[RMDB]
RNA sequence: GGGAACGACUCGAGUAGAGUCGAAAAGAUAUGGACAUGCACUAGGGUCUCCUUACAUGGAGUCCAAGCGUCGGAAACGACGCACGGACUAUGAAGUGUUGGGAGACCCUAGUGCAUGUCCUAAGUCCAAGCGACACAAGUUCGCUUGUGUCGCUUGAAAAGAAACAACAACAACAAC
Reactivity to DMS in 0.01 (KOAc 150mM, MgCl2 10mM, bicine 150mM(pH8.5), 24C), signal-to-noise 1, nucleotides 027 to 126: g010a080u060a300u000g000g020a010c020a010u000g000c000a040c000u020a020g020g000g000u010c020u010c000c000u000u000a000c020a000u000g000g000a080g020u000c000c000a110a300g000c010g060u000c000g030g000a140a120a300c000g090a000c010g000c000a030c300g010g030a010c000u000a260u020g000a130a240g000u000g000u000u000g010g000g000a000g000a000c010c000c000u000a070g000u000g040c020a000u000g000u000c010c000u000a010a130g000u030c020